The data come from the RNA Mapping Database (RMDB), library M2RFPK.
The record gives the reactivity of an RNA of 207 nucleotides to DMS and 2A3.
2A3 adducts were read by reverse transcription with SuperScript II with manganese.
For DMS, 2,398 sequencing reads were counted.
The reactions ran in a buffer of 150 mM KOAc, 10 mM MgCl2 and 150 mM bicine (pH 8.5), at 24 C.
RNA sequence: GGGAACGACUCGAGUAGAGUCGAAAAAGCUGGUAGUACUACGGUACUACCAGCAUAAUUCGUGGUUCGAAAACCUCCCACGCAAAAAAACUAAGGAAAAACGCCGAGUAGUACGCUACACGGCGAAGGUACCGGAAUCAGUUCGCUGAUUCCGGAAGAACAGUUAAGAGUUCGCUCUUAACUGUUCAAAAGAAACAACAACAACAAC
Reactivity to DMS in 0.01 (KOAc 150mM, MgCl2 10mM, bicine 150mM(pH8.5), 24C), signal-to-noise 1, nucleotides 027 to 156: a200g020c000u000g050g010u000a010g040u000a000c000u000a070c300g140g000u000a000c000u000a000c020c000a000g000c000a020u000a010a090u000u000c030g020u020g000g010u000u000c000g000a120a090a090a300c070c000u000c000c010c010a050c070g010c080a010a010a070a090a070a020a030c130u000a040a050g030g020a000a010a030a070a110c010g020c000c000g040a040g000u000a020g020u010a150c170g060c010u000a010c020a120c000g010g000c010g060a010a000g020g010u020a080c020c000g020g030a050a020u000c010a010g010u010u010c300g010c000u000g020a010u010u000c000c020g000g000a020a010
Reactivity to 2A3 in 0.01 (KOAc 150mM, MgCl2 10mM, bicine 150mM(pH8.5), 24C), signal-to-noise 3, nucleotides 027 to 156: a000g000c000u010g000g000u000a020g000u000a000c000u020a020c200g050g000u000a000c000u000a000c010c000a000g000c000a000u000a010a070u030u040c010g010u020g000g040u050u080c100g050a080a060a140a220c000c010u000c010c030c010a020c020g100c040a050a110a040a020a020a020a070c120u200a090a140g030g030a060a090a070a020a000c000g000c000c000g010a000g000u010a000g000u020a020c160g000c050u000a010c010a000c000g000g000c010g000a000a000g010g000u030a060c000c000g010g000a000a000u000c000a000g070u060u130c180g000c080u000g000a000u000u000c010c010g000g000a000a000